[RMDB]
RNA sequence: GGGAACGACUCGAGUAGAGUCGAAAACUCUUGGAGUCUGCCGAGAACACGUGUAGCGCUCCUGUUCCUUUUCAAAAGAAACAUGAAAAGAGGCUCCCUCUACAACACUCUGACGUCGCGCUGCAGGGCGUCAUCGCCCUUUCGAGGGCGAUGACGCAAAAGAAACAACAACAACAAC
Reactivity to 2A3 in 0.01 (KOAc 150mM, MgCl2 10mM, bicine 150mM(pH8.5), 24C), signal-to-noise 1, nucleotides 027 to 126: c010u010c000u020u030g050g030a020g020u020c040u060g020c020c010g010a060g030a080a060c070a010c050g250u250g020u140a030g000c010g030c060u030c000c010u020g010u040u070c000c000u080u000u040u120c200a240a160a000a040g100a030a130a030c040a000u300g100a060a020a300a010g040a040g020g000c000u050c000c070c050u020c020u080a100c050a150a010c050a050c050u180c030u060g050a080c010g020u000c020g000c040g000c100u020g000c040a020g030g090